[RMDB]
RNA sequence: GGGAACGACUCGAGUAGAGUCGAAAAUCAAAGCAAUGGUAGAGUCCUAGGCACCACAUCUUCGGGCGAUGUCGAAGCAAUGGCACAGUCCUAGGCAUCGUUCCAGCAUCCUAUGUCGAAGCAAUAGCAUAUCAUCUAUGUUCGCAUAGAUGAUAUGAAAAGAAACAACAACAACAAC
Reactivity to DMS in 0.01 (KOAc 150mM, MgCl2 10mM, bicine 150mM(pH8.5), 24C), signal-to-noise 9, nucleotides 027 to 126: u010c090a080a110a100g010c090a080a070u000g010g010u000a070g010a100g010u000c020c020u010a080g010g020c050a090c050c040a030c130a100u000c030u000u000c080g010g000g000c060g000a040u000g010u000c010g010a080a050g010c160a070a080u000g010g020c090a120c180a110g000u010c010c010u010a090g000g000c020a040u000c020g010u000u000c010c020a090g000c090a080u000c030c020u000a040u000g010u000c060g000a080a080g010c140a080a080u000a090g000
Reactivity to 2A3 in 0.01 (KOAc 150mM, MgCl2 10mM, bicine 150mM(pH8.5), 24C), signal-to-noise 9, nucleotides 027 to 126: u070c020a040a030a020g050c040a050a150u090g040g020u060a050g010a020g110u030c010c010u020a020g030g000c030a020c030c020a050c010a100u100c030u080u070c040g040g040g050c090g110a100u130g030u060c000g020a020a000g000c050a040a100u200g020g000c100a060c050a250g070u130c000c010u000a010g010g000c000a020u010c010g020u140u020c010c000a000g010c010a040u030c000c020u070a090u140g090u060c060g060a050a010g030c040a060a120u040a130g040